[RMDB]
RNA sequence: GGGAACGACUCGAGUAGAGUCGAAAAUUCGACCAAGGUUCGACUCGAGCGCCAGCGAGAGAGCGUUGCCGCAGGCAACGACCCGAAGGGCGAAGCGCGCAGCGCUGAGUAAUCCUUCCCCCACCACUACUAUCCUACAAUUCGUUGUAGGAUAGUAAAAAGAAACAACAACAACAAC
Reactivity to 2A3 in 0.01 (KOAc 150mM, MgCl2 10mM, bicine 150mM(pH8.5), 24C), signal-to-noise 9, nucleotides 027 to 126: u080u030c030g030a020c030c030a080a050g130g020u080u100c040g040a010c010u010c010g050a040g030c010g010c010c010a040g040c040g020a110g010a030g010a030g110c010g010u010u010g010c010c020g210c150a060g040g000c010a020a020c020g100a110c000c010c010g080a090a100g030g010g010c030g020a030a010g020c020g000c030g010c070a110g010c000g000c020u020g010a010g020u040a030a080u060c000c000u000u020c000c000c000c000c000a040c020c020a060c040
Reactivity to DMS in 0.01 (KOAc 150mM, MgCl2 10mM, bicine 150mM(pH8.5), 24C), signal-to-noise 9, nucleotides 027 to 126: u010u020c070g000a080c090c080a110a100g000g010u010u000c050g010a030c010u000c010g010a090g020c020g010c020c020a070g010c040g010a200g000a140g010a090g010c010g010u000u000g000c000c020g020c240a120g020g010c010a010a030c010g010a060c030c020c020g000a100a080g020g010g000c030g010a150a070g010c020g020c020g030c180a130g010c010g020c010u000g000a120g010u000a080a070u020c010c010u000u010c000c000c010c010c020a130c170c140a090c170